[RMDB]
RNA sequence: GGGAACGACUCGAGUAGAGUCGAAAAAUUUAUAUCAGUUGGGCCUUCUGGUGAUGUUAUUGGCCACCCAGAAGGUCCUGAGGAAGAAUCCUUUUCAGUUGGGCCUUCUGGUGAUGUGUCAGGGCACCCAGCAUUACGUGUUCGCGCGUAGUGUUGGAAAAGAAACAACAACAACAAC
Reactivity to 2A3 in 0.01 (KOAc 150mM, MgCl2 10mM, bicine 150mM(pH8.5), 24C), signal-to-noise 1, nucleotides 027 to 126: a010u060u190u020a010u030a020u060c040a020g070u080u010g010g000g020c000c000u040u060c010u000g070g020u070g060a300u020g060u080u130a300u180u160g140g000c000c000a000c000c000c000a000g000a000a000g000g000u000c010c000u000g000a010g090g020a000a060g040a120a210u080c000c000u000u000u020u100c060a110g000u190u100g030g010g000c030c000u000u070c000u010g050g040u050g070a220u060g170u050g000u010c020a010g010g010g030c010a020c000
This 177-nucleotide RNA was probed chemically with 2A3. The reactions ran in a buffer of 150 mM KOAc, 10 mM MgCl2 and 150 mM bicine (pH 8.5), at 24 C.